[RMDB]
RNA sequence: GGGAACGACUCGAGUAGAGUCGAAAAAGAAGGGCACUGGUGGAAACCGGUCCGAGUACCGGGUGGGCAAUCCGGCCUGGGAGCAGAUCGGCGACGGUGGCAUCCAGACCACGCCUAGCCAACUGGCGAUGAGCAACAGAUUCGUCUGUUGCUCAUCAAAAGAAACAACAACAACAAC
Reactivity to 2A3 in 0.01 (KOAc 150mM, MgCl2 10mM, bicine 150mM(pH8.5), 24C), signal-to-noise 1, nucleotides 027 to 126: a010g070a040a100g020g000g000c060a040c140u070g040g060u030g040g040a090a090a060c000c000g000g000u000c000c010g020a030g000u040a030c020c000g010g040g020u080g040g000g000c080a050a120u110c060c000g060g000c010c020u010g030g020g010a040g040c040a020g040a180u030c040g030g000c040g010a050c040g010g030u010g010g000c010a010u020c000c000a020g060a050c000c010a040c040g050c000c000u050a060g020c000c040a100a120c060u020g000g000c030
Reactivity to DMS in 0.01 (KOAc 150mM, MgCl2 10mM, bicine 150mM(pH8.5), 24C), signal-to-noise 4, nucleotides 027 to 126: a080g010a170a130g010g000g000c050a070c080u000g030g050u000g010g010a080a130a080c020c010g010g010u000c020c060g020a090g010u000a080c020c000g000g000g030u000g000g010g020c220a140a110u020c070c050g000g030c030c000u000g000g000g000a110g010c050a040g020a070u000c040g010g000c170g010a160c090g010g020u010g000g010c060a050u000c030c040a060g010a130c050c030a050c100g000c010c000u000a110g000c030c030a080a120c100u000g000g000c300
Source: RMDB library OK2TST, as collected in RNAgym. Structure probing data (2A3 and DMS) for a 177-nucleotide construct. DMS adducts were read by reverse transcription with MarathonRT. Reactivities are given for positions 27 through 126. For DMS, 3,566 sequencing reads were counted. The reactions ran in a buffer of 150 mM KOAc, 10 mM MgCl2 and 150 mM bicine (pH 8.5), at 24 C.